[RMDB]
RNA sequence: GGGAACGACUCGAGUAGAGUCGAAAAAGUUUUCAAGUCGUGACUUAUAGUUACUCCUAAGUCUUUGUGCUCUUGAAUGCGUGGAAGAGAUGUACCAUUAAUGGUAUAGUGGUAACUAAUAUCGUGCCCAUAAUCGUCACUUCGGUGACGAUUAUGGAAAAGAAACAACAACAACAAC
Reactivity to 2A3 in 0.01 (KOAc 150mM, MgCl2 10mM, bicine 150mM(pH8.5), 24C), signal-to-noise 6, nucleotides 027 to 126: a000g050u070u010u030u090c110a070a020g030u110c010g070u050g070a040c030u080u060a060u060a180g000u010u020a040c030u070c060c030u100a120a090g030u020c020u040u080u100g150u120g040c020u030c040u130u140g190a270a110u190g040c050g030u040g120g060a040a030g010a010g020a070u100g040u030a000c000c000a030u100u300a110a140u210g020g000u020a000u040a030g060u050g000g000u010a010a000c010u010a050a060u050a050u100c100g020u030g050c020
Reactivity to DMS in 0.01 (KOAc 150mM, MgCl2 10mM, bicine 150mM(pH8.5), 24C), signal-to-noise 2, nucleotides 027 to 126: a120g020u000u000u000u000c060a090a040g010u010c040g010u000g010a090c120u040u030a050u010a040g000u000u000a020c020u000c100c040u040a120a110g000u000c000u010u000u000g020u050g010c020u020c040u050u100g000a120a050u010g040c070g000u040g010g030a100a020g000a030g010a080u020g020u000a000c000c010a080u020u020a140a050u030g000g010u000a040u000a010g010u000g000g020u030a000a020c040u000a040a160u020a140u020c130g040u000g000c130